[RMDB]
The record gives the reactivity of an RNA of 177 nucleotides to 2A3 and DMS.
The DMS profile rests on 2,461 reads.
The reactions ran in a buffer of 150 mM KOAc, 10 mM MgCl2 and 150 mM bicine (pH 8.5), at 24 C.
For DMS the reverse transcriptase was MarathonRT.
2A3 adducts were read by reverse transcription with SuperScript II with manganese.

RNA sequence: GGGAACGACUCGAGUAGAGUCGAAAAGGAAAUAUGCUUAAGCCUCAAUAAAGCUUGCCUUGAGUGCCUCAAGCAGAAAAUAUUGACUGAAACAUUUAGUAUGGGCAAGCAGGGAGCAAUAAAAAAACACUACUUCCUAGUUCGCUAGGAAGUAGUGAAAAGAAACAACAACAACAAC
Reactivity to 2A3 in 0.01 (KOAc 150mM, MgCl2 10mM, bicine 150mM(pH8.5), 24C), signal-to-noise 4, nucleotides 027 to 126: g080g020a050a060a020u190a030u070g000c010u030u040a050a030g020c000c010u020c030a040a050u080a150a130a010g020c000u020u010g010c010c010u020u050g040a020g030u100g020c030c020u090c090a010a020g000c030a010g130a030a180a010a000u160a040u060u070g030a050c030u010g030a080a090a050c020a040u100u140u120a070g030u060a090u160g030g030g000c010a000a010g000c020a010g070g010g010a060g040c070a090a060u190a150a100a020a000a000a000a000
Reactivity to DMS in 0.01 (KOAc 150mM, MgCl2 10mM, bicine 150mM(pH8.5), 24C), signal-to-noise 3, nucleotides 027 to 126: g000g000a110a040a020u000a030u010g000c000u000u000a080a130g000c020c020u000c030a050a080u010a130a100a090g010c020u010u000g010c010c020u000u010g000a020g010u010g000c050c030u000c140a030a030g030c010a110g000a080a050a090a060u000a040u010u000g000a160c040u000g010a070a100a150c050a040u000u000u000a110g010u010a090u000g000g000g010c020a000a010g020c030a160g000g000g010a050g000c130a020a040u020a000a000a060a070a080a050a100